[RMDB]
RNA sequence: GGGAACGACUCGAGUAGAGUCGAAAACAGGUUGCAGCUGGCGAACAUGGACGUCCACGCGCCCGGAUGUGCGUCCACGGCGUCCAUCAGCGCGCGGGCCCCGGCCUCCAGGCCCGCCCCGCCCUGCCCCUAGUAGGUUAUUCGUAACCUACUAGGGAAAAGAAACAACAACAACAAC
Reactivity to DMS in 0.01 (KOAc 150mM, MgCl2 10mM, bicine 150mM(pH8.5), 24C), signal-to-noise 5, nucleotides 027 to 126: c090a130g010g010u010u000g000c030a040g010c040u020g010g000c050g000a060a090c250a020u010g000g000a010c020g020u000c000c140a200c300g000c010g000c000c030c090g000g010a080u050g030u010g030c000g000u010c080c170a230c230g000g000c000g000u000c000c000a010u000c050a050g010c040g010c100g030c040g010g000g030c000c040c060c120g010g020c020c020u000c020c070a230g040g010c000c000c030g010c010c020c040c040g020c080c000c000u000g000c110
Reactivity to 2A3 in 0.01 (KOAc 150mM, MgCl2 10mM, bicine 150mM(pH8.5), 24C), signal-to-noise 5, nucleotides 027 to 126: c040a030g080g070u130u150g040c040a050g010c070u120g030g020c050g040a050a060c050a100u020g000g000a000c010g010u030c030c010a020c020g010c000g020c020c060c040g170g080a160u250g050u070g010c010g030u060c060c040a030c090g000g000c000g000u020c010c010a020u030c020a020g070c020g000c020g000c000g000g000g000c010c000c000c000g100g000c010c020u010c020c020a010g000g020c000c000c000g010c000c000c000c000g030c000c000c000u010g000c000